[RMDB]
This 207-nucleotide RNA was probed chemically with DMS and 2A3. For DMS, 2,218 sequencing reads were counted. The data come from the RNA Mapping Database (RMDB), library ARCHII. Reactivities are given for positions 27 through 156. 2A3 adducts were read by reverse transcription with SuperScript II with manganese.
RNA sequence: GGGAACGACUCGAGUAGAGUCGAAAAGAGGGAUCCACCGAUGAGUUCGGUCGCGGGACUCAUCGGGACACCAACAGCGACUGGGAUCGUCAUCCUGGCUUGUUCGCGUGACCAGGAGAUCCGAGUAGAGGCAUAGCGAACUGCGCACGGAGAAGCCCACACAACUCAAGUUCGCUUGAGUUGUGUGAAAAGAAACAACAACAACAAC
Reactivity to DMS in 0.01 (KOAc 150mM, MgCl2 10mM, bicine 150mM(pH8.5), 24C), signal-to-noise 1, nucleotides 027 to 156: g020a120g010g010g020a090u000c000c040a110c010c020g000a010u010g000a040g030u000u000c010g020g030u000c030g010c030g000g020g000a040c010u010c000a030u010c010g000g000g000a040c110a070c110c100a150a300c030a120g000c010g010a040c020u010g000g010g020a070u000c000g030u010c020a110u040c000c040u000g010g040c020u000u010g010u000u000c030g000c070g020u000g000a090c000c000a010g000g000a140g010a040u000c020c010g000a220g010u010a050g030a050g040g060c020a100u000a030g010c020g020a000a060c070u000g000c000g020c000a170c050g000g000a080g000a090a100g020c020c000
Reactivity to 2A3 in 0.01 (KOAc 150mM, MgCl2 10mM, bicine 150mM(pH8.5), 24C), signal-to-noise 3, nucleotides 027 to 156: g170a020g040g060g030a060u050c020c030a010c000c020g010a010u000g000a000g000u000u000c000g010g010u010c000g000c000g010g000g000a000c000u010c000a000u000c010g000g000g010a000c010a030c030c140a050a020c000a010g000c000g010a000c010u000g010g010g000a000u000c000g000u010c010a010u000c010c000u000g000g020c000u180u300g000u020u000c000g010c010g020u010g030a090c010c000a020g000g000a010g010a000u000c000c000g010a020g010u300a010g020a020g010g010c090a110u180a020g000c000g000a000a000c010u000g030c070g010c010a050c100g030g060a080g010a140a050g020c010c010